RNA sequence: GGGAACGACUCGAGUAGAGUCGAAAAUCUUCAUGCACAAGUUGCAUCGGAAGCGUAUGAAAUAGCUCUUGUCUGCCGUUCUGGUGAGUUUUAACGCCUACUUGAUACGAUUUAACAUGAUCGUUUUCAAUGCCUUCAUAGAGCGUUAGAGGCGUGCGCCUGUAGACGCGUUCGCGCGUCUACAGGCAAAAGAAACAACAACAACAAC
Reactivity to 2A3 in 0.01 (KOAc 150mM, MgCl2 10mM, bicine 150mM(pH8.5), 24C), signal-to-noise 1, nucleotides 027 to 156: u000c000u060u050c000a030u000g030c010a010c040a150a130g080u160u010g020c000a040u000c020g080g000a040a000g020c050g050u110a090u110g150a010a030a040u050a010g010c000u000c020u130u090g160u020c070u030g000c030c030g060u150u060c050u020g060g000u000g010a080g030u020u020u000u100a040a020c000g010c000c000u070a120c000u040u040g000a000u010a020c000g020a010u000u030u110a180a050c090a140u250g000a000u000c000g000u160u050u050u000c080a070a020u170g020c030c010u000u190c010a110u050a110g110a000g000c000g000u000u040a050g020a010g110g000c030g030u020g010c090
Chemical mapping of a 207-nucleotide RNA with 2A3. For 2A3, 728 sequencing reads were counted. It was measured as part of the RMDB library OK3TST. The reactions ran in a buffer of 150 mM KOAc, 10 mM MgCl2 and 150 mM bicine (pH 8.5), at 24 C.